[RMDB]
RNA sequence: GGGAACGACUCGAGUAGAGUCGAAAAGGCGGUCGAUAAUCUUGGUCAUGUAAUUGUGUGUGGGUUGCUCGAUGGGGUGCGGGCCGUCGCGGGCAAUCAGCGGCUGGUGGACCUCGAACUGUACGCGCUCCCAAUUUACGUUCGCGUAAAUUGGGAGAAAAGAAACAACAACAACAAC
Reactivity to 2A3 in 0.01 (KOAc 150mM, MgCl2 10mM, bicine 150mM(pH8.5), 24C), signal-to-noise 5, nucleotides 027 to 126: g040g020c020g030g060u110c020g020a080u130a170a100u150c040u070u070g040g020u020c010a080u090g050u190a170a140u150u090g030u000g020u000g010u070g040g060g000u030u100g000c020u010c060g080a130u080g040g030g000g040u090g040c030g020g020g010c000c010g010u000c000g010c020g010g020g010c020a020a060u040c020a010g020c000g060g010c020u040g000g050u030g020g010a040c030c000u030c030g030a050a030c020u040g020u150a040c030g010c010g010
Reactivity to DMS in 0.01 (KOAc 150mM, MgCl2 10mM, bicine 150mM(pH8.5), 24C), signal-to-noise 3, nucleotides 027 to 126: g010g010c040g010g030u000c070g020a080u020a050a050u020c080u010u000g010g040u030c070a080u030g010u020a040a100u000u010g050u000g010u000g040u040g000g000g000u000u010g050c030u000c050g020a160u020g000g030g000g010u010g040c020g020g000g000c030c050g000u010c050g000c070g000g000g050c090a050a040u000c060a100g000c100g000g000c030u000g020g000u020g000g000a020c070c020u000c050g020a020a130c090u000g000u000a040c120g010c080g000